[RMDB]
RNA sequence: GGGAACGACUCGAGUAGAGUCGAAAAGAUAUGGAACACGGGAGCUCGCGAUCGGAAACGAUCGAGUGGAGCUUUGAUCGUGUUUCCUAAGUCAAAAGUACCUUCUUCGUUCGCGAAGAAGGUACAAGCUAAACGUACCGUUCGCGGUACGUUUAGCAAAAGAAACAACAACAACAAC
Reactivity to DMS in 0.01 (KOAc 150mM, MgCl2 10mM, bicine 150mM(pH8.5), 24C), signal-to-noise 1, nucleotides 027 to 126: g030a020u000a300u000g000g010a020a000c010a000c010g010g000g000a020g030c010u000c000g020c000g000a000u010c010g040g000a050a070a190c020g000a000u000c000g000a010g000u000g000g000a010g050c010u000u020u010g010a060u040c000g020u000g030u000u000u030c000c010u000a090a210g000u000c020a050a060a140a130g000u000a000c000c000u000u020c000u000u000c000g040u000u020c300g010c000g020a020a000g000a000a000g000g000u000a000c000a000a080